[RMDB]
RNA sequence: GGGAACGACUCGAGUAGAGUCGAAAACUGUUAAACUCCGUGCCGCCCAGCACGCGAGGGGUCUCGACAACGGGUGCGCUAGUCCAUCUGCUAUGUGAGCAGGGUGGGCGACACCGUCAAAUUGCGGGGAUCUCCUAUAGCUCAUCGUACCCGCUCACAUACUGGGCAAGUUCGCUUGCCCAGUAUGAAAAGAAACAACAACAACAAC
Reactivity to 2A3 in 0.01 (KOAc 150mM, MgCl2 10mM, bicine 150mM(pH8.5), 24C), signal-to-noise 3, nucleotides 027 to 156: c050u040g110u180u150a130a050a050c010u000c000c000g000u000g000c000c010g020c010c000c000a000g000c000a020c000g020c120g000a020g000g020g000g020u020c030u020c110g080a070c030a110a010c040g080g000g020u060g000c060g010c070u030a040g030u000c040c010a030u020c020u010g010c020u060a070u300g170u110g230a030g000c020a060g050g040g000u000g000g000g000c020g010a000c020a030c010c010g060u040c030a080a160a200u120u200g000c030g000g010g010g040a100u030c040u030c030c010u050a060u120a110g040c010u010c050a080u050c050g020u020a030c000c000c000g010c010u020c010a050
Reactivity to DMS in 0.01 (KOAc 150mM, MgCl2 10mM, bicine 150mM(pH8.5), 24C), signal-to-noise 2, nucleotides 027 to 156: c070u020g030u000u010a070a120a130c010u000c010c000g030u010g030c020c040g020c030c040c040a300g020c020a010c010g000c060g010a010g020g000g040g000u000c030u010c050g000a070c000a080a050c020g000g020g020u010g060c030g000c130u000a070g010u000c030c020a050u000c020u010g000c000u000a150u040g020u000g010a080g030c040a060g000g000g040u010g000g000g040c020g000a040c030a090c010c000g000u000c040a070a120a190u000u000g000c000g010g010g000g000a100u000c010u000c010c050u010a050u000a100g010c050u000c010a100u000c000g010u000a130c000c000c020g000c010u000c060a190
Annotation:
This 207-nucleotide RNA was probed chemically with 2A3 and DMS. For DMS the reverse transcriptase was MarathonRT. It was measured as part of the RMDB library RSTRND. The DMS profile rests on 3,350 reads. As a SHAPE reagent, 2A3 marks flexible, mostly unpaired nucleotides at the ribose 2'-OH. For 2A3 the reverse transcriptase was SuperScript II with manganese. For 2A3, 1,844 sequencing reads were counted.